The record gives the reactivity of an RNA of 177 nucleotides to 2A3 and DMS.
The DMS profile rests on 74,661 reads.
DMS adducts were read by reverse transcription with MarathonRT.
The RNA was probed in 150 mM KOAc, 10 mM MgCl2 and 150 mM bicine (pH 8.5) at 24 C.
RNA sequence: GGGAACGACUCGAGUAGAGUCGAAAAUCAAUAGUACAAUCUUUACGAUGGACAUAUUGUGCUAGGAGUAUGAAGAAGUACGUAAAGAUCAUACUCAUUUGUCUGUAAUCGUACUUCACAGGCAGAAGAUAGUAUGCUGAUUCGUCAGUGUACUAUCAAAAGAAACAACAACAACAAC
Reactivity to 2A3 in 0.01 (KOAc 150mM, MgCl2 10mM, bicine 150mM(pH8.5), 24C), signal-to-noise 9, nucleotides 027 to 126: u090c020a010a080u020a030g010u010a010c010a020a030u010c080u090u210u090a110c110g140a150u200g090g040a030c030a050u160a010u020u030g020u020g000c000u020a030g000g060a010g010u020a010u050g030a030a120g030a050a010g030u040a020c020g020u080a080a110a050g080a050u080c010a010u020a020c010u020c050a110u080u080u070g030u000c020u010g050u040a030a050u080c030g010u010a020c000u030u040c040a010c010a030g070g000c020a020g020a130a010
Reactivity to DMS in 0.01 (KOAc 150mM, MgCl2 10mM, bicine 150mM(pH8.5), 24C), signal-to-noise 9, nucleotides 027 to 126: u030c050a080a070u010a010g000u000a020c010a030a020u010c110u010u010u030a110c170g010a090u020g010g000a090c140a070u020a040u000u000g010u010g000c030u010a020g000g010a030g000u000a010u000g010a080a130g010a050a040g010u000a020c030g000u010a090a070a100g000a070u000c020a030u000a010c030u010c050a120u020u020u010g010u000c010u000g010u010a090a100u030c030g010u000a010c040u000u000c050a100c140a050g000g010c060a050g000a090a110